[RMDB]
RNA sequence: GGGAACGACUCGAGUAGAGUCGAAAAAAACUUGACACUCGGAACCAUGUCAAAAUUGGUGAGACUCUUACCUUUGUUUAUAAGUAUAGUAUAGAUGGUAUAUUGUAUCUAUAUGCGAAGAACGAGGCUACUCGUUCCGUUUCGACGGAACGAGUAGAAAAGAAACAACAACAACAAC
Reactivity to DMS in 0.01 (KOAc 150mM, MgCl2 10mM, bicine 150mM(pH8.5), 24C), signal-to-noise 1, nucleotides 027 to 126: a030a070a080c110u000u010g030a090c060a080c110u000c110g000g010a150a060c050c010a100u010g010u000c050a040a020a150a050u010u000g010g000u000g010a240g000a070c020u000c040u010u000a150c170c020u010u000u000g000u000u000u000a010u000a020a020g010u000a000u000a020g000u000a000u000a020g010a180u010g030g000u000a030u000a020u000u000g000u000a000u000c000u000a010u000a000u000g010c020g000a020a010g020a120a090c130g000a030g010g000
The record gives the reactivity of an RNA of 177 nucleotides to DMS. For DMS, 953 sequencing reads were counted. The RNA was probed in 150 mM KOAc, 10 mM MgCl2 and 150 mM bicine (pH 8.5) at 24 C.